[RMDB]
RNA sequence: GGGAACGACUCGAGUAGAGUCGAAAAUCACAAAGCGGAUUUAGCUCGGUUGGGAGAGGUCCAGACCGAAGAUCUGGUUGUCCUGUGUCCGACUCACAGAAUUCGCACCAUAAACAACGGGAGAUUCCGAUAGGACGCCGUUCGCGGCGUCCUAUCGAAAAGAAACAACAACAACAAC
Reactivity to 2A3 in 0.01 (KOAc 150mM, MgCl2 10mM, bicine 150mM(pH8.5), 24C), signal-to-noise 1, nucleotides 027 to 126: u100c000a070c070a140a070a000g000c010g010g010a000u000u030u060a020g040c030u080c040g000g090u060u080g000g010g000a050g010a000g000g020u100c000c000a000g010a000c010c040g290a220a000g080a130u020c000u000g000g040u000u190g070u160c000c000u000g020u000g080u200c000c000g040a000c000u000c000a050c000a020g040a000a000u090u000c030g010c000a030c000c000a020u130a110a250a000c090a130a000c020g090g060g000a190g000a030u100u000c080